[RMDB]
RNA sequence: GGGAACGACUCGAGUAGAGUCGAAAAUACGGAUUUGGCUCUGACGAACCGGUCCGACAGCCGCCGCAUCCGGAUCAUCAGCGAGGCCGACGGGCUCACGAUGCCGUCGAGGUAGGCGGUCAGGUCCAUUAUGCUCACGCUUCGGCGUGAGCAUAAUAAAAGAAACAACAACAACAAC
Reactivity to 2A3 in 0.01 (KOAc 150mM, MgCl2 10mM, bicine 150mM(pH8.5), 24C), signal-to-noise 3, nucleotides 027 to 126: u210a050c040g030g010a010u030u170u300g010g000c010u030c040u180g180a100c080g020a070a040c050c000g000g040u000c000c000g010a000c000a030g040c020c020g000c020c010g070c150a040u070c010c000g040g030a090u300c010a000u010c040a030g000c030g090a050g060g180c000c020g100a140c150g060g010g000c010u000c010a000c030g020a000u050g010c040c010g080u090c070g040a020g030g070u050a170g010g000c020g000g010u020c050a030g090g000u010c000c000
Reactivity to DMS in 0.01 (KOAc 150mM, MgCl2 10mM, bicine 150mM(pH8.5), 24C), signal-to-noise 1, nucleotides 027 to 126: u040a180c020g000g000a060u000u000u050g060g010c060u000c010u000g060a160c180g000a060a100c040c000g000g110u000c050c000g000a060c100a080g010c010c000g020c020c000g000c090a110u060c000c000g000g000a120u040c000a000u010c020a070g010c110g000a040g000g010c000c000g000a130c280g080g000g000c000u000c020a130c020g000a020u000g000c040c000g040u010c030g030a120g050g000u010a040g020g020c000g000g020u000c100a140g020g000u020c020c040

Source: RMDB library OK1LIB, as collected in RNAgym. Structure probing data (2A3 and DMS) for a 177-nucleotide construct. Values cover nucleotides 27 to 126. DMS adducts were read by reverse transcription with MarathonRT.